[RMDB]
RNA sequence: GGGAACGACUCGAGUAGAGUCGAAAAAACGCACUGUCCAUCUGCGAGAGUGUACAGCUGGUCGAACAUCUCGAAGAGACGAGCGGACGGUUGAUGGAUGGUGCAUAUGACUGUGCGUCCGCCAGCACUCCCAAGACUGUUUCGACAGUCUUGGGAGAAAAGAAACAACAACAACAAC
Reactivity to 2A3 in 0.01 (KOAc 150mM, MgCl2 10mM, bicine 150mM(pH8.5), 24C), signal-to-noise 2, nucleotides 027 to 126: a010a000c140g010c000a000c020u000g000u060c000c010a000u000c010u060g020c070g010a060g010a040g100u120g090u080a070c040a020g100c070u200g020g080u220c020g060a040a010c030a080u020c010u000c070g090a280a000g070a010g050a080c050g030a010g040c000g040g030a020c040g060g020u040u100g020a010u010g010g000a010u010g000g000u030g000c000a000u050a020u060g030a020c030u060g000u070g090c000g020u020c000c050g000c020c020a010g000c000a020
Reactivity to DMS in 0.01 (KOAc 150mM, MgCl2 10mM, bicine 150mM(pH8.5), 24C), signal-to-noise 2, nucleotides 027 to 126: a060a080c200g000c010a000c010u000g000u000c020c020a030u000c030u010g020c060g020a090g010a070g040u010g030u010a080c200a150g010c090u000g010g040u010c060g010a100a030c030a090u000c010u010c020g020a130a120g010a180g000a060c060g010a170g010c020g030g000a030c020g020g010u010u010g000a020u000g010g030a000u000g020g050u000g000c010a040u010a020u010g030a150c050u020g000u000g000c030g000u000c060c060g030c040c030a060g000c150a300